[RMDB]
RNA sequence: GGGAACGACUCGAGUAGAGUCGAAAAUUCGCCUGGUUCGUGGCGCCUUGUGACCCCGGGCCCCUGCCGCCUGCAAGUCGGAAAUUGCGCUGUGCUCCUGUGCUACGGCCUGUGGCUGGACUGCCUGAUAUCGUUUUUCAUUCGUGAAAAACGAUAUAAAAGAAACAACAACAACAAC
Reactivity to 2A3 in 0.01 (KOAc 150mM, MgCl2 10mM, bicine 150mM(pH8.5), 24C), signal-to-noise 9, nucleotides 027 to 126: u060u030c020g020c010c010u030g030g020u080u100c050g040u080g040g010c010g020c020c010u050u090g060u090g060a090c000c010c010c000g010g030g000c000c000c000c020u040g030c000c010g010c000c000u020g030c040a040a030g040u060c020g050g030a050a090a090u100u090g010c040g000c030u040g030u060g060c020u030c010c020u060g020u050g040c020u030a030c030g030g010c000c010u080g030u050g040g000c010u020g000g030a020c020u040g020c000c000u010g020
Reactivity to DMS in 0.01 (KOAc 150mM, MgCl2 10mM, bicine 150mM(pH8.5), 24C), signal-to-noise 6, nucleotides 027 to 126: u010u020c050g010c010c010u020g000g020u020u000c060g020u010g000g020c060g010c050c060u000u010g020u000g000a110c050c020c030c050g000g000g010c020c030c040c030u010g000c040c020g010c060c030u000g010c080a060a100g010u010c040g000g010a060a080a100u010u000g010c040g010c030u020g010u010g010c050u010c040c020u000g010u020g010c020u000a080c060g010g020c010c030u010g020u010g000g020c030u010g010g000a070c070u000g010c020c030u010g000